Structure probing data (DMS and 2A3) for a 177-nucleotide construct. For 2A3, 17,954 sequencing reads were counted. For DMS the reverse transcriptase was MarathonRT. The reactions ran in a buffer of 150 mM KOAc, 10 mM MgCl2 and 150 mM bicine (pH 8.5), at 24 C.

[RMDB]
RNA sequence: GGGAACGACUCGAGUAGAGUCGAAAAUACGCACACAAGUUGAUUUAGCUAAAGAAGUCUUUUCUAUACCAGUAGAUAUUGCCUCACAACCUUUAGCCACUACUCUCAUAGGAGAACUUGCAAGCUAGAGUAUUUAUCGAUUCGUCGAUAAAUACUCAAAAGAAACAACAACAACAAC
Reactivity to DMS in 0.01 (KOAc 150mM, MgCl2 10mM, bicine 150mM(pH8.5), 24C), signal-to-noise 4, nucleotides 027 to 126: u030a070c120g000c030a090c150a150c080a040a040g000u010u010g000a090u010u040u010a090g000c040u010a020a090a110g000a040a100g000u010c020u010u000u000u000c030u000a060u020a080c170c200a050g020u010a040g010a050u020a020u000u010g020c040c050u010c140a050c100a070a110c140c040u010u000u000a020g000c000c020a120c080u010a090c010u000c020u000c140a070u010a060g020g020a030g000a030a040c020u010u000g000c100a120a110g000c090u040a080
Reactivity to 2A3 in 0.01 (KOAc 150mM, MgCl2 10mM, bicine 150mM(pH8.5), 24C), signal-to-noise 9, nucleotides 027 to 126: u100a010c030g010c010a020c000a010c010a070a060g030u040u050g140a200u090u130u230a020g020c020u060a080a030a040g060a070a010g040u050c020u020u070u010u000c010u010a030u020a110c030c030a030g030u030a000g050a040u090a060u100u130g040c010c010u080c010a090c030a080a100c020c010u050u040u060a020g010c000c010a040c040u110a060c010u020c000u010c040a080u070a050g070g050a020g030a050a030c010u010u030g010c060a090a060g020c020u050a030